[RMDB]
RNA sequence: GGGAACGACUCGAGUAGAGUCGAAAAGAUCCGCUUGCGCCUACGGUGGGUGCUUCUGGUGCUGUGUAUGGGCUUAUGGCGAUUUUUGUGGCGAUGUCGUACCGGUUGCGUAGGGAUCUCACAGCACUCAACAGAAGACGUUCGCGUCUUCUGUUGAAAAAGAAACAACAACAACAAC
Reactivity to 2A3 in 0.01 (KOAc 150mM, MgCl2 10mM, bicine 150mM(pH8.5), 24C), signal-to-noise 1, nucleotides 027 to 126: g040a110u030c010c030g000c100u050u100g000c030g020c010c020u130a120c070g130g050u120g070g050g000u030g000c000u100u060c020u040g050g000u030g000c010u010g050u020g020u060a110u260g060g020g000c000u070u030a050u070g300g030c020g010a040u010u020u000u060u300g100u130g050g000c070g070a100u160g080u180c000g010u010a190c090c000g040g000u080u080g020c030g010u050a020g070g050g020a230u040c000u000c040a020c000a000g010c010a040c010
Reactivity to DMS in 0.01 (KOAc 150mM, MgCl2 10mM, bicine 150mM(pH8.5), 24C), signal-to-noise 2, nucleotides 027 to 126: g010a100u010c020c010g010c100u010u000g020c070g000c020c020u010a120c160g020g000u010g010g010g030u010g000c060u010u020c040u010g010g020u010g000c010u010g030u010g010u010a080u000g010g010g020c030u000u010a050u010g020g030c020g010a060u000u000u010u000u010g010u010g020g020c040g010a170u010g000u020c060g010u000a100c040c050g000g000u020u020g000c040g020u000a070g000g000g000a100u000c050u000c010a040c050a040g000c020a040c050